Source: RMDB library M2RFPK, as collected in RNAgym. Structure probing data (2A3) for a 207-nucleotide construct. The reactions ran in a buffer of 150 mM KOAc, 10 mM MgCl2 and 150 mM bicine (pH 8.5), at 24 C.
RNA sequence: GGGAACGACUCGAGUAGAGUCGAAAAAAUUAGAGGCAAUUUGAAAUAAUUUAAAUUAGCUCAACCCUACUGCACUUACCGAACUAGAUAACGGUGUAGUAGGGGUAAAUUCUCCGCAUUCCGUGCGCAACCACCUGAGGUUUCGACCUCAGGUGAAGUGUACCGAGUGAUUCGUCACUCGGUACACAAAAGAAACAACAACAACAAC
Reactivity to 2A3 in 0.01 (KOAc 150mM, MgCl2 10mM, bicine 150mM(pH8.5), 24C), signal-to-noise 1, nucleotides 027 to 156: a000a000u150u070a070g000a060g030g050c010a000a020u020u020u020g080a060a150a020u220a160a230u210u070u170a020a060a020u050u030a000g000c000u000c020a010a010c010c010c000u010a000c000u030g000c010a010c000u130u010a060c090c000g200a170a060c030u010a060g120a230u150a240a020c080g030g020u000g030u000a000g010u000a000g010g010g000g030u010a000a000a000u010u000c010u000c000c050g000c010a050u170u050c100c090g000u000g040c030g010c070a060a080c020c000a000c000c000u000g000a000g060g000u080u000u070c140g160a120c020c000u000c000a000g000g000u000g000a000a000